[RMDB]
RNA sequence: GGGAACGACUCGAGUAGAGUCGAAAAAGAUGGUUCGCGCUGACACAAUGAAGCCAUGCAACGUGGCAUUCAUUGGUAUGAAUGGCGAUUCAUUCAGAACAUUUUAUAAAGCAGGGUACAACAAAGACUCAGCCAUCAAUGGAAAACUCACGCGAGGUGCUUAUUAUGAGUUCGCUCAUAAUAAGCAAAAAGAAACAACAACAACAAC
Reactivity to 2A3 in 0.01 (KOAc 150mM, MgCl2 10mM, bicine 150mM(pH8.5), 24C), signal-to-noise 4, nucleotides 027 to 156: a000g040a020u030g000g020u060u070c040g010c010g000c100u040g040a010c010a020c000a180a000u000g000a000a000g010c000c000a020u050g060c130a140a120c230g000u010g000g000c050a140u000u010c000a000u010u020g020g020u080a100u110g020a050a040u020g040g010c040g050a010u060u150c020a010u030u060c020a010g090a100a030c020a050u070u090u120u150a150u130a080a090a000g010c040a040g000g030g030u110a080c030a170a010c020a080a270a000g020a020c010u010c050a010g000c010c000a030u050c030a030a070u050g050g000a000a050a030a030c000u000c000a020c020g060c040g000a010g000g070
Reactivity to DMS in 0.01 (KOAc 150mM, MgCl2 10mM, bicine 150mM(pH8.5), 24C), signal-to-noise 3, nucleotides 027 to 156: a180g010a050u000g010g030u010u000c060g010c040g030c040u010g010a280c120a080c010a020a040u010g010a030a070g010c010c000a020u000g010c080a150a090c300g030u000g000g000c010a150u000u000c000a000u000u000g010g020u010a080u020g010a040a060u000g000g020c040g000a210u000u000c010a040u000u000c040a070g020a090a120c060a060u010u020u000u000a140u000a100a090a110g030c030a110g040g000g020u010a080c050a080a150c080a070a060a080g000a050c050u000c020a100g020c010c000a050u000c050a020a160u000g010g000a120a110a050a040c020u000c020a060c030g020c000g000a070g040g020
Source: RMDB library OK3TST, as collected in RNAgym. Structure probing data (2A3 and DMS) for a 207-nucleotide construct. Reactivities are given for positions 27 through 156. The reactions ran in a buffer of 150 mM KOAc, 10 mM MgCl2 and 150 mM bicine (pH 8.5), at 24 C.